[RMDB]
This 177-nucleotide RNA was probed chemically with 2A3 and DMS. It was measured as part of the RMDB library OK2TRN. For DMS the reverse transcriptase was MarathonRT. High DMS reactivity at an A or C suggests that its Watson-Crick edge is free.
RNA sequence: GGGAACGACUCGAGUAGAGUCGAAAACUCAGGAGACCUUAGCUGGUCCUCCAGCACCUCUCAACUCCACUCCUACUAAACUGGGAACUUCUCUGGUGCUCAGGCCAGAGUCGGGGUCCGUCACCGACUGUGGUCCAACAUUCGUGUUGGACCACAGAAAAGAAACAACAACAACAAC
Reactivity to 2A3 in 0.01 (KOAc 150mM, MgCl2 10mM, bicine 150mM(pH8.5), 24C), signal-to-noise 2, nucleotides 027 to 126: c030u000c040a040g030g040a070g000a010c000c040u090u110a030g060c200u090g030g040u080c100c000u020c010c000a010g040c000a030c000c010u060c000u020c020a040a120c010u030c030c040a020c040u000c060c010u070a080c040u080a100a140a070c060u070g060g000g030a040a030c030u100u060c030u000c020u050g040g000u030g050c060u060c160a060g000g130c000c020a010g000a000g040u040c030g020g000g030g040u000c030c050g070u070c040a050c090c020g100a050
Reactivity to DMS in 0.01 (KOAc 150mM, MgCl2 10mM, bicine 150mM(pH8.5), 24C), signal-to-noise 3, nucleotides 027 to 126: c040u010c060a140g010g010a090g010a060c030c030u000u000a170g000c060u000g010g010u010c090c120u000c050c030a100g030c050a050c050c020u010c020u000c060a070a070c090u000c030c050a070c070u000c000c020u000a060c080u010a030a100a140c230u000g000g000g010a040a130c130u000u010c020u000c020u000g000g020u000g000c080u000c180a090g000g000c010c010a010g010a010g000u000c060g000g010g000g010u010c040c060g000u000c100a130c030c030g000a120